Description
An RNA of 177 nucleotides, treated with DMS and 2A3 and read out base by base. The 2A3 profile rests on 6,671 reads. It was measured as part of the RMDB library OK2TST. For 2A3 the reverse transcriptase was SuperScript II with manganese. High DMS reactivity at an A or C suggests that its Watson-Crick edge is free. For DMS the reverse transcriptase was MarathonRT. The RNA was probed in 150 mM KOAc, 10 mM MgCl2 and 150 mM bicine (pH 8.5) at 24 C.
RNA sequence: GGGAACGACUCGAGUAGAGUCGAAAAAUUGGCGAGCGGUGAACGGCUGGUCCUGCCGCCCGAGGUGGUCGCGGUCCUGGACCGGCUGCGCGGCUUCGGCAUCGGCGAGGAGCGGAUCCGGCUCGAACAUUUUAUCACCUUUCGAGGUGAUAAAAUGAAAAGAAACAACAACAACAAC
Reactivity to DMS in 0.01 (KOAc 150mM, MgCl2 10mM, bicine 150mM(pH8.5), 24C), signal-to-noise 6, nucleotides 027 to 126: a120u010u010g010g000c010g010a030g010c020g010g010u000g000a140a230c060g000g000c010u000g010g000u000c000c010u000g010c010c010g000c110c020c020g000a130g020g010u010g010g010u010c140g020c010g000g010u010c110c130u000g000g010a030c040c050g000g000c000u000g000c060g010c050g010g000c020u000u000c030g000g010c070a110u010c130g010g020c020g010a090g010g000a170g010c020g000g000a120u000c010c010g010g020c010u000c010g000a090a180
Reactivity to 2A3 in 0.01 (KOAc 150mM, MgCl2 10mM, bicine 150mM(pH8.5), 24C), signal-to-noise 4, nucleotides 027 to 126: a010u130u100g100g060c010g000a020g030c040g050g030u070g060a110a070c030g010g000c000u020g010g010u000c000c000u010g010c000c000g040c000c010c010g110a210g160g250u300g030g040u150c090g000c000g010g010u070c050c110u030g000g020a030c030c000g010g010c000u000g000c010g000c020g060g020c000u040u040c020g040g000c030a100u150c080g160g000c030g020a080g000g000a020g020c010g000g020a010u000c020c000g080g030c010u000c020g000a040a010